Source: RMDB library VIROID, as collected in RNAgym. Chemical mapping of a 177-nucleotide RNA with DMS. DMS adducts were read by reverse transcription with MarathonRT. The DMS profile rests on 600 reads. The reactions ran in a buffer of 150 mM KOAc, 10 mM MgCl2 and 150 mM bicine (pH 8.5), at 24 C.
RNA sequence: GGGAACGACUCGAGUAGAGUCGAAAACCUUCCAAAGUGACCGAGGGGGGAGCUUGGAACGUGGGGGACCAGUGGAGCCAUGGGAUGCUCUUCCCGAUUCCGUCCAAUCCCCACCCCCGAGGGUCGCGUCAGUAAAGUACUUCGGUACUUUACUGACAAAAGAAACAACAACAACAAC
Reactivity to DMS in 0.01 (KOAc 150mM, MgCl2 10mM, bicine 150mM(pH8.5), 24C), signal-to-noise 1, nucleotides 027 to 126: c050c090u020u010c110c120a100a150a240g020u000g010a040c020c000g030a300g000g040g010g000g010g000a040g030c200u050u000g000g010a050a060c100g030u010g070g020g000g020g040a070c150c100a070g000u000g000g020a030g020c000c040a200u000g000g000g000a290u010g000c010u020c060u000u000c150c000c020g000a050u000u010c120c050g020u000c000c030a050a120u000c010c020c060c050a180c000c000c020c000c000g000a150g020g000g010u000c020g040c030